Chemical mapping of a 177-nucleotide RNA with DMS and 2A3.
Reactivities are given for positions 27 through 126.
As a SHAPE reagent, 2A3 marks flexible, mostly unpaired nucleotides at the ribose 2'-OH.
The DMS profile rests on 11,928 reads.
DMS adducts were read by reverse transcription with MarathonRT.
RNA sequence: GGGAACGACUCGAGUAGAGUCGAAAACUGGCAAAUUUAGGAAAAGCCAAGUACUUCACAACGUUAGAUUUGAAGUCCGGCUACCACCAGAUAUACUUGGCCGAACAUGACCGUGAAAAGACCUCUACAUAAUGGUACCUUUCGAGGUACCAUUAUGAAAAGAAACAACAACAACAAC
Reactivity to DMS in 0.01 (KOAc 150mM, MgCl2 10mM, bicine 150mM(pH8.5), 24C), signal-to-noise 6, nucleotides 027 to 126: c030u010g000g000c060a060a090a090u010u040u040a100g020g000a160a100a130a110g000c000c020a050a050g010u000a090c030u000u020c010a030c220a060a040c090g030u030u040a060g010a110u000u010u010g010a020a020g000u010c070c120g010g000c010u000a080c090c090a110c020c030a030g000a060u020a070u030a100c070u010u000g010g000c000c030g000a100a080c090a080u010g010a050c030c040g010u000g000a060a050a090a060g000a140c060c020u000c020u000a120
Reactivity to 2A3 in 0.01 (KOAc 150mM, MgCl2 10mM, bicine 150mM(pH8.5), 24C), signal-to-noise 9, nucleotides 027 to 126: c010u010g010g000c030a060a140a230u160u180u090a280g020g050a080a100a050a000g000c010c000a030a060g020u030a030c000u000u030c010a030c060a160a090c080g130u200u220a130g020a300u080u030u060g020a020a000g010u030c020c030g030g000c020u060a060c000c020a020c000c010a010g050a030u130a000u020a120c020u050u090g030g000c010c020g030a040a010c040a060u120g040a090c000c030g030u060g060a050a080a020a010g100a060c020c000u020c010u030a060